[RMDB]
RNA sequence: GGGAACGACUCGAGUAGAGUCGAAAACCGUUUCCUAAAUCAAGCGGUAAGCUACGUAGGUUCUUCCACCAAAUCCACGCAGGCACCGGCAAUGGCGGCGCCGUCCACGUAUCAUGAUUACCGACGCAAAGUAAUGUCUUAACGUGUUUAUAUUUGGGCUACCGAUAAGGUUCGCCUUAUCGGUAGCAAAAGAAACAACAACAACAAC
Reactivity to 2A3 in 0.01 (KOAc 150mM, MgCl2 10mM, bicine 150mM(pH8.5), 24C), signal-to-noise 2, nucleotides 027 to 156: c000c000g000u030u070u030c050c020u140a200a210a110u210c110a140a040g060c000g000g010u050a110a000g000c030u040a000c020g020u050a100g000g000u040u040c000u090u000c050c020a090c030c000a060a000a090u070c020c000a080c070g060c060a070g040g000c040a000c070c000g030g040c070a060a300u110g060g030c030g000g000c000g010c000c040g050u000c010c010a020c050g000u000a040u130c070a130u170g010a080u070u010a000c030c030g020a060c110g050c100a190a000a030g020u110a090a080u050g120u060c050u090u140a090a040c080g060u040g010u000u160u000a130u030a060u140u070u060g010g090